[RMDB]
RNA sequence: GGGAACGACUCGAGUAGAGUCGAAAAGAUAUGGAAUUGCCGAGGAUCUAAGGGAUCGGAAACGAUCCUUAGGGAGGCAUUCCUAAGUCAAAAGCAAUCCGAGCUGGUUCGCCAGCUCGGAUUGCAAGGAUUAUAGAGUGUUCGCACUCUAUAAUCCAAAAGAAACAACAACAACAAC
Reactivity to 2A3 in 0.01 (KOAc 150mM, MgCl2 10mM, bicine 150mM(pH8.5), 24C), signal-to-noise 1, nucleotides 027 to 126: g010a000u030a030u160g000g040a020a030u230u210g000c000c020g040a290g050g000a010u020c010u010a030a050g300g070g070a070u010c010g020g010a030a070a060c000g010a000u000c000c000u000u010a000g000g000g010a010g010g020c000a000u010u000c010c000u020a120a030g010u030c040a080a010a080a070g010c000a000a030u000c040c000g000a010g010c070u020g050g200u100u210c300g070c100c010a020g110c000u000c020g020g000a010u000u000g000c010a000a010
Reactivity to DMS in 0.01 (KOAc 150mM, MgCl2 10mM, bicine 150mM(pH8.5), 24C), signal-to-noise 1, nucleotides 027 to 126: g000a020u000a300u000g000g000a000a000u010u000g020c010c000g010a100g030g000a030u000c000u020a010a010g010g010g020a020u000c000g010g000a090a110a170c010g010a000u000c000c000u010u020a020g000g000g010a020g020g030c010a030u000u000c000c000u000a030a080g010u010c050a030a060a080a170g000c030a020a000u000c010c040g020a000g000c000u000g000g020u010u010c280g020c000c010a020g030c000u010c000g000g000a000u000u000g020c000a030a020

This 177-nucleotide RNA was probed chemically with 2A3 and DMS. The reactions ran in a buffer of 150 mM KOAc, 10 mM MgCl2 and 150 mM bicine (pH 8.5), at 24 C. The DMS profile rests on 1,541 reads. Values cover nucleotides 27 to 126. Source: RMDB library TTRDEL, as collected in RNAgym.